RNA sequence: GGGAACGACUCGAGUAGAGUCGAAAAUAAAAGGAGGAUGAGAAAUAUAGAGAGAUAUCGGUACUCCCACGCGCGUCUCUCAUUGAUAUGAGUGAUAAAAGGGUGAUUAUGUUAUAGCGCGCAAAAAGACCUGUAAUCAGUUCGCUGAUUACAGGUCAAAAGAAACAACAACAACAAC
Reactivity to 2A3 in 0.01 (KOAc 150mM, MgCl2 10mM, bicine 150mM(pH8.5), 24C), signal-to-noise 1, nucleotides 027 to 126: u140a000a020a010a000g000g020a000g000g030a060u020g000a020g050a020a120a030u140a000u040a130g040a010g010a000g000a160u040a010u120c020g040g000u040a040c070u040c020c000c000a040c020g090c020g000c000g050u030c010u000c000u040c000a000u070u140g000a000u040a070u290g000a000g040u050g040a000u060a040a110a040a040g030g050g060u150g040a090u020u190a070u100g070u110u020a110u110a130g020c010g000c000g000c000a000a010a150a000a030
Reactivity to DMS in 0.01 (KOAc 150mM, MgCl2 10mM, bicine 150mM(pH8.5), 24C), signal-to-noise 1, nucleotides 027 to 126: u010a090a090a060a090g000g010a040g000g000a090u020g000a080g000a100a070a110u010a170u010a060g020a070g010a080g000a020u010a080u000c020g000g020u010a160c150u000c000c000c050a120c080g000c000g030c040g000u010c000u010c000u000c010a010u000u000g010a090u050a060u010g010a020g000u000g000a050u000a030a060a060a060g010g010g030u010g000a130u000u000a090u000g000u010u010a100u000a110g000c020g010c000g000c120a030a020a040a100a040

An RNA of 177 nucleotides, treated with 2A3 and DMS and read out base by base. For 2A3 the reverse transcriptase was SuperScript II with manganese. Reactivities are rounded to 0.1 and cut off at 0 and 3. It was measured as part of the RMDB library M2PK90. The RNA was probed in 150 mM KOAc, 10 mM MgCl2 and 150 mM bicine (pH 8.5) at 24 C.